[RMDB]
RNA sequence: GGGAACGACUCGAGUAGAGUCGAAAAGGCGGAUCAGCAUAUCCAUGACGACCGGGCCACCGUGACCUUGCAGCUCAAGCACAUCUUCACCGGUAAAUGAAUGAGGAUUGGGGAAAAACAGCGCAAAUCGCCAUAGGAUAUUCGUAUCCUAUGGCGAAAAAGAAACAACAACAACAAC
Reactivity to 2A3 in 0.01 (KOAc 150mM, MgCl2 10mM, bicine 150mM(pH8.5), 24C), signal-to-noise 1, nucleotides 027 to 126: g040g020c040g050g000a140u050c050a030g010c030a030u100a050u120c050c030a050u040g030a010c060g040a030c030c000g000g000g020c000c010a050c000c020g080u080g000a050c020c090u040u080g010c060a040g050c040u060c040a020a030g030c040a020c000a080u000c010u080u040c000a030c060c010g000g000u040a010a120a100u150g090a030a060u040g000a010g010g020a020u000u110g000g020g050g020a000a030a020a060a030c030a000g150c010g030c070a010a010a100
Reactivity to DMS in 0.01 (KOAc 150mM, MgCl2 10mM, bicine 150mM(pH8.5), 24C), signal-to-noise 2, nucleotides 027 to 126: g010g020c070g000g000a040u020c060a110g000c060a060u000a110u020c100c090a110u020g000a060c040g030a030c030c090g000g000g010c080c010a080c110c110g000u010g010a090c080c030u000u000g040c050a160g000c080u000c070a040a110g000c070a080c130a060u000c050u000u000c040a080c050c020g000g000u000a040a050a080u000g000a100a090u000g010a110g000g030a100u000u010g000g000g000g000a030a050a050a080a060c040a080g020c040g000c110a060a140a080
Source: RMDB library OK2TST, as collected in RNAgym. The record gives the reactivity of an RNA of 177 nucleotides to 2A3 and DMS. 2A3 adducts were read by reverse transcription with SuperScript II with manganese. DMS adducts were read by reverse transcription with MarathonRT. The RNA was probed in 150 mM KOAc, 10 mM MgCl2 and 150 mM bicine (pH 8.5) at 24 C.